RNA sequence: GGGAACGACUCGAGUAGAGUCGAAAAGCAACUCGUAGACGAAGAUGUCAAGCGCAUCCUCGCCGCCGCUUACGAGCGCUCGCGCCAGAUCGUCUCCGACUACAAGCAGGCGAUGCAGGAAGUGGCCGACAUAAGAUGCAUUCGUGCAUCUUAUGUCAAAAGAAACAACAACAACAAC
Reactivity to 2A3 in 0.01 (KOAc 150mM, MgCl2 10mM, bicine 150mM(pH8.5), 24C), signal-to-noise 5, nucleotides 027 to 126: g040c020a040a090c010u020c070g070u090a040g030a070c020g030a070a040g030a090u080g030u050c060a120a060g050c020g000c090a010u010c010c010u010c020g030c020c020g020c010c010g000c010u030u070a030c040g010a020g010c020g000c030u070c040g040c020g060c020c020a060g010a110u030c010g070u000c020u000c040c030g090a090c020u140a060c080a090a020g040c030a030g020g000c010g040a030u090g040c050a050g050g050a070a020g030u040g060g020c050c060
Reactivity to DMS in 0.01 (KOAc 150mM, MgCl2 10mM, bicine 150mM(pH8.5), 24C), signal-to-noise 6, nucleotides 027 to 126: g010c060a120a100c040u010c030g030u000a050g000a070c010g020a090a050g000a050u000g030u000c050a130a170g040c140g020c020a050u000c020c030u000c030g010c020c030g010c050c050g010c090u000u000a090c080g010a030g020c140g000c090u000c060g030c120g010c060c060a110g010a030u000c020g010u000c010u000c070c030g010a160c110u000a070c190a100a080g000c100a040g020g010c020g010a030u010g010c090a070g010g000a050a040g020u000g010g020c050c230